RNA sequence: GGGAACGACUCGAGUAGAGUCGAAAAAAAAAAGAUAUGGAUCUUGAGCAACUGCUACUUGUCAAUGAUGCUCUAUCGGAAACGAUAGAGUUGAGACAACUAGCAGGCAAGAUCCUAAGUCAAAAAAGAACUGAUUAAAGUUCGCUUUAAUCAGUUCAAAAGAAACAACAACAACAAC
Reactivity to DMS in 0.01 (KOAc 150mM, MgCl2 10mM, bicine 150mM(pH8.5), 24C), signal-to-noise 3, nucleotides 027 to 126: a000a020a010a140a120a110g010a040u000a200u030g010g000a000u000c000u000u020g000a300g020c160a220a080c000u000g000c020u000a020c140u000u000g000u000c000a260a120u000g020a090u000g010c000u000c000u000a000u010c000g010g000a050a030a070c000g020a030u000a000g000a040g010u000u000g000a110g020a000c000a000a000c050u000a020g010c000a020g000g010c010a020a010g000a000u000c000c000u010a010a060g000u000c010a010a070a090a080a090a130
Reactivity to 2A3 in 0.01 (KOAc 150mM, MgCl2 10mM, bicine 150mM(pH8.5), 24C), signal-to-noise 2, nucleotides 027 to 126: a000a000a010a010a010a020g030a010u060a020u060g000g000a000u000c010u000u020g000a030g110c140a170a100c030u000g010c000u000a000c010u030u010g030u020c050a200a300u140g010a000u050g000c010u040c000u010a010u010c010g020g000a050a030a000c010g000a000u010a000g000a000g010u010u010g000a010g000a000c000a000a010c010u010a000g000c000a000g010g000c000a000a000g010a010u000c000c000u000a010a000g000u000c010a100a070a020a250a020a070